[RMDB]
RNA sequence: GGGAACGACUCGAGUAGAGUCGAAAAGAGAGUGUAGAUGCUCAGAGUGUGUUUCUGGACUCGCAAUAUACAUCAGGUGAUGUAACAUUUGACUGGGAUGAUUGAGACAUCGACUCCUCACUUGAUUAUACAAUUAUCAUUAACUCAGCCUUAAUGAGGAGCAUGUAUGUUUCGACAUACAUGCUCCAAAAGAAACAACAACAACAAC
Reactivity to 2A3 in 0.01 (KOAc 150mM, MgCl2 10mM, bicine 150mM(pH8.5), 24C), signal-to-noise 3, nucleotides 027 to 156: g100a000g000a000g000u070g000u160a050g000a090u030g000c010u020c080a050g020a040g050u170g000u020g040u060u040u040c010u050g000g010a010c030u000c040g010c050a060a000u100a010u020a080c050a060u020c030a020g090g080u140g110a010u050g050u080a130a110c040a150u070u150u150g110a060c030u020g000g070g030a040u060g030a030u090u110g030a040g040a040c020a050u040c030g050a020c030u030c000c000u020c020a040c010u020u040g020a030u020u180a100u020a090c100a060a030u080u030a050u150c040a010u010u070a020a040c030u010c140a030g060c010c030u070u090a050a040u060g020a020
Reactivity to DMS in 0.01 (KOAc 150mM, MgCl2 10mM, bicine 150mM(pH8.5), 24C), signal-to-noise 1, nucleotides 027 to 156: g010a060g050a090g100u000g000u000a160g010a170u010g010c050u000c000a110g000a060g010u000g020u060g030u000u000u000c000u010g000g020a100c030u010c050g040c060a100a060u000a130u000a030c060a070u000c000a210g040g020u000g000a050u000g000u000a080a180c080a080u000u000u010g030a050c050u010g000g000g030a160u030g000a140u000u030g060a120g000a140c150a100u000c070g010a080c010u000c010c010u010c000a060c030u000u000g010a070u000u000a140u000a060c070a080a080u000u000a140u000c000a060u000u000a020a080c020u010c020a080g030c050c030u000u000a040a080u010g010a230